The record gives the reactivity of an RNA of 207 nucleotides to 2A3 and DMS.
Reactivities are given for positions 27 through 156.
The 2A3 profile rests on 11,080 reads.
2A3 adducts were read by reverse transcription with SuperScript II with manganese.
The reactions ran in a buffer of 150 mM KOAc, 10 mM MgCl2 and 150 mM bicine (pH 8.5), at 24 C.
As a SHAPE reagent, 2A3 marks flexible, mostly unpaired nucleotides at the ribose 2'-OH.

RNA sequence: GGGAACGACUCGAGUAGAGUCGAAAACUGUCCGAACAUUCAGGUAACAUUGCGGAUUCCGUCACAUCCAUCACAACCAUAUUGAAGGCCUUUAAUCCUUCAGUGGCACAUGUCAUAGGUAAUAUUUUAUUGACGACACUUGGAUUAAUUUCCUCGAUAGGUGAAUGAAAUUCGUUUCAUUCACCUAAAAAGAAACAACAACAACAAC
Reactivity to 2A3 in 0.01 (KOAc 150mM, MgCl2 10mM, bicine 150mM(pH8.5), 24C), signal-to-noise 9, nucleotides 027 to 156: c040u040g050u030c010c020g050a080a050c050a120u110u170c060a050g020g060u080a060a050c040a160u100u210g030c050g040g030a060u110u070c060c020g040u040c030a030c000a090u030c040c000a020u070c050a030c030a120a200c030c020a050u070a110u110u090g030a040a010g000g000c000c000u140u220u120a040a050u070c010c000u010u020c010a000g010u000g010g020c080a040c020a200u110g010u020c010a030u030a080g040g060u080a110a070u050a170u120u200u090u070a100u070u080g020a010c020g010a000c010a000c060u030u050g000g010a000u010u050a020a060u030u090u050c010c020u040c020g110a070
Reactivity to DMS in 0.01 (KOAc 150mM, MgCl2 10mM, bicine 150mM(pH8.5), 24C), signal-to-noise 6, nucleotides 027 to 156: c040u010g010u010c020c010g030a120a100c090a170u000u000c060a090g010g000u000a100a090c080a120u000u000g010c010g010g000a140u010u010c030c040g010u000c040a090c170a080u000c020c020a100u010c070a110c070a100a060c010c010a050u000a110u000u000g010a030a030g020g020c210c100u000u000u000a090a110u000c010c000u000u000c010a050g010u010g010g000c010a080c070a080u000g020u000c020a080u000a140g010g020u000a050a070u000a110u000u010u000u000a060u010u030g010a080c060g010a060c030a050c090u000u010g010g000a070u000u000a060a110u010u000u000c010c010u000c020g010a300